Overview: This 177-nucleotide RNA was probed chemically with 2A3 and DMS. For 2A3, 19,545 sequencing reads were counted. For DMS, 12,003 sequencing reads were counted. The RNA was probed in 150 mM KOAc, 10 mM MgCl2 and 150 mM bicine (pH 8.5) at 24 C. In probing experiments dimethyl sulfate is read out at A N1 and C N3, which are open when not base-paired.

RNA sequence: GGGAACGACUCGAGUAGAGUCGAAAAGAAGAGCCGCGCUAACAAAGGUGGGAGGCACCCAACCCUUCGCAAGAGCCGAGUGGGAAGGCUAAGCGAAACCAAGACAAAAUGGUUAUAAAUAAUGCAAACCUAUUACUAAGUUCGCUUAGUAAUAGGUAAAAGAAACAACAACAACAAC
Reactivity to 2A3 in 0.01 (KOAc 150mM, MgCl2 10mM, bicine 150mM(pH8.5), 24C), signal-to-noise 9, nucleotides 027 to 126: g070a040a010g030a020g020c020c010g030c020g000c070u080a110a070c050a180a080a020g020g000u040g010g020g030a130g030g000c020a060c000c000c000a030a090c020c000c000u030u020c010g000c030a080a100g020a010g210c010c010g020a030g080u190g030g060g040a050a030g010g000c000u020a040a010g000c000g000a010a000a000c010c010a050a010g150a180c070a040a110a030a110u080g040g000u060u050a100u050a120a100a030u190a050a060u100g050c030a080a070
Reactivity to DMS in 0.01 (KOAc 150mM, MgCl2 10mM, bicine 150mM(pH8.5), 24C), signal-to-noise 9, nucleotides 027 to 126: g010a130a070g010a130g020c030c040g020c060g020c060u000a080a070c110a090a080a100g000g010u000g010g010g010a120g010g020c040a070c020c030c010a080a120c050c020c040u000u010c010g020c030a050a130g000a060g020c010c010g000a140g020u000g010g000g010a100a140g000g000c010u000a030a220g010c020g010a030a050a040c010c010a030a070g010a120c180a040a050a090a060u000g000g010u010u000a090u000a050a050a080u010a070a080u010g000c120a080a100